Structure probing data (DMS and 2A3) for a 177-nucleotide construct. DMS adducts were read by reverse transcription with MarathonRT. The DMS profile rests on 1,178 reads. Values cover nucleotides 27 to 126. The data come from the RNA Mapping Database (RMDB), library 15KREP.
[RMDB]
RNA sequence: GGGAACGACUCGAGUAGAGUCGAAAAAGAGCUAUGCCUAAUAUGUGUAGAAUCUUCGCUUCACUCAUAUUAGCUCGUAAACAUGGCACUUGUUGUACUACAAGGGACAGAUUUUAUCGCUUGGCAACUGCCAAUUAUUCUUCGGAAUAAUUGGCAGAAAAGAAACAACAACAACAAC
Reactivity to DMS in 0.01 (KOAc 150mM, MgCl2 10mM, bicine 150mM(pH8.5), 24C), signal-to-noise 2, nucleotides 027 to 126: a040g010a070g000c000u000a030u000g000c060c020u000a020a010u000a020u000g020u010g020u010a080g040a030a020u000c120u020u020c180g020c270u000u000c010a100c010u010c000a050u000a010u000u000a050g010c090u000c100g000u010a090a040a120c270a070u000g000g000c030a090c050u000u000g040u000u000g020u000a040c150u000a040c000a000a030g010g010g010a030c050a070g010a170u000u010u000u010a070u000c080g020c070u000u010g000g020c070a040a200
Reactivity to 2A3 in 0.01 (KOAc 150mM, MgCl2 10mM, bicine 150mM(pH8.5), 24C), signal-to-noise 1, nucleotides 027 to 126: a000g090a000g000c050u050a050u060g000c000c000u010a020a010u020a030u000g030u050g000u060a210g020a000a000u040c080u170u150c190g090c140u000u000c030a010c000u010c010a000u010a010u020u010a010g020c020u000c050g050u030a010a010a010c030a070u030g010g000c000a000c040u020u000g060u080u030g050u130a090c050u030a030c020a000a000g020g020g050a010c040a020g080a040u000u010u100u110a080u050c020g000c110u020u020g000g000c000a060a100